[RMDB]
The record gives the reactivity of an RNA of 177 nucleotides to DMS and 2A3.
The reactions ran in a buffer of 150 mM KOAc, 10 mM MgCl2 and 150 mM bicine (pH 8.5), at 24 C.
For DMS the reverse transcriptase was MarathonRT.
It was measured as part of the RMDB library OK2TST.
Reactivities are given for positions 27 through 126.
For 2A3, 1,597 sequencing reads were counted.
RNA sequence: GGGAACGACUCGAGUAGAGUCGAAAACAUCAACGGAAUCGGCGGCAAUCUGGUAUCGGUGCAGGCCAGCAAGAUAUCCACAAUGCUGCACCAGAGCUCAAUUAUCGGGAUUAUACCACCGCACACACUAAUACUCCCGGUUCGCCGGGAGUAUUAGAAAAGAAACAACAACAACAAC
Reactivity to DMS in 0.01 (KOAc 150mM, MgCl2 10mM, bicine 150mM(pH8.5), 24C), signal-to-noise 3, nucleotides 027 to 126: c030a090u000c090a070a120c130g010g010a100a070u000c050g010g010c030g020g020c080a050a100u020c020u020g000g000u000a060u000c070g000g000u000g010c040a040g000g030c150c040a030g010c110a060a090g020a150u000a080u000c060c060a130c130a090a080u000g020c010u010g000c030a060c020c010a100g010a070g010c040u000c070a030a070u010u020a060u000c060g030g010g000a040u000u010a070u000a120c030c030a070c060c040g010c150a030c170a050c110a130
Reactivity to 2A3 in 0.01 (KOAc 150mM, MgCl2 10mM, bicine 150mM(pH8.5), 24C), signal-to-noise 2, nucleotides 027 to 126: c020a050u120c050a010a010c070g040g030a090a060u080c030g040g000c010g030g050c100a010a060u110c060u000g030g010u020a030u140c070g040g000u020g000c010a020g000g090c050c000a010g000c020a060a000g010a090u060a100u130c010c010a070c020a080a070u090g020c000u010g020c010a010c020c000a020g010a000g010c020u030c090a040a150u140u080a050u180c020g040g000g000a010u090u060a050u080a080c020c030a060c010c000g040c010a040c010a010c000a000